[RMDB]
RNA sequence: GGGAACGACUCGAGUAGAGUCGAAAAAUACAGCGUAAUCGAGCGGAGGAAAACGGCACUCCGAAAAUCCGGUACGAUUAUCAUCCCACUGCGUCGACGCUAGAUGCAGAACCGGAUUGCCGAGGAAAGUUCCGAAUAGGUUCGCCUAUUCGGAACUAAAAGAAACAACAACAACAAC
Reactivity to 2A3 in 0.01 (KOAc 150mM, MgCl2 10mM, bicine 150mM(pH8.5), 24C), signal-to-noise 1, nucleotides 027 to 126: a000u140a010c070a030g000c010g070u080a070a080u120c050g030a050g150c010g020g010a000g050g030a050a180a130a000c020g010g000c000a010c020u030c010c000g000a090a000a000a000u000c000c000g040g050u070a080c100g060a110u170u020a030u250c010a040u010c000c000c000a000c010u000g000c000g000u000c010g060a110c080g090c160u050a040g000a010u030g000c000a010g030a070a020c010c000g000g000a000u000u010g000c000c000g010a030g030g130a120a110
Reactivity to DMS in 0.01 (KOAc 150mM, MgCl2 10mM, bicine 150mM(pH8.5), 24C), signal-to-noise 2, nucleotides 027 to 126: a090u000a110c150a080g000c060g030u010a060a020u000c030g010a110g030c000g010g000a040g010g010a080a040a080a120c010g010g000c010a050c060u010c010c010g000a030a010a020a010u000c000c000g020g020u010a090c210g000a120u000u000a050u000c140a110u000c000c010c040a270c040u000g000c000g000u000c040g000a100c150g000c270u000a060g010a010u000g000c000a000g010a100a070c060c010g000g000a040u000u010g010c070c010g010a090g020g000a080a100